Chemical mapping of a 177-nucleotide RNA with 2A3 and DMS. Conditions: 150 mM KOAc, 10 mM MgCl2 and 150 mM bicine (pH 8.5), 24 C. 2A3 is a SHAPE reagent: it acylates the 2'-hydroxyl of flexible nucleotides of all four kinds. Source: RMDB library OK1LIB, as collected in RNAgym.
[RMDB]
RNA sequence: GGGAACGACUCGAGUAGAGUCGAAAAGCUCUAGGAGACUAGAGCGAUACGUUAGAGAGCUCGUGGCAUGACUAACGGAUAGCUAGGUACGAGGUUGCCAGAGGACAUAGCUAUAGCUAUGUCCAAAGACCUAUCAUACGUUCGCGUAUGAUAGGUCAAAAGAAACAACAACAACAAC
Reactivity to 2A3 in 0.01 (KOAc 150mM, MgCl2 10mM, bicine 150mM(pH8.5), 24C), signal-to-noise 3, nucleotides 027 to 126: g000c000u010c000u010a010g020g010a030g010a040c000u000a000g000a000g000c010g000a000u000a010c040g000u040u050a040g010a000g000a000g070c010u010c060g090u090g030g000c040a040u050g030a110c010u010a040a000c030g050g010a090u070a020g080c080u000a020g000g070u000a020c030g050a050g100g040u020u030g040c010c010a010g040a050g070g000a000c000a000u000a000g000c010u130a020u050a300g000c000u000a000u010g010u010c000c000a000a010a000
Reactivity to DMS in 0.01 (KOAc 150mM, MgCl2 10mM, bicine 150mM(pH8.5), 24C), signal-to-noise 3, nucleotides 027 to 126: g010c000u000c000u010a000g000g020a280g010a160c000u000a000g000a000g000c010g000a050u040a030c040g010u000u000a040g000a230g000a140g020c000u000c050g000u020g000g000c050a110u010g010a130c020u030a010a030c080g000g000a090u010a070g010c040u010a110g010g020u010a040c070g010a070g000g030u000u000g020c050c060a100g000a150g000g000a020c000a000u000a010g010c020u010a130u020a090g000c000u010a000u000g000u000c000c000a000a020a090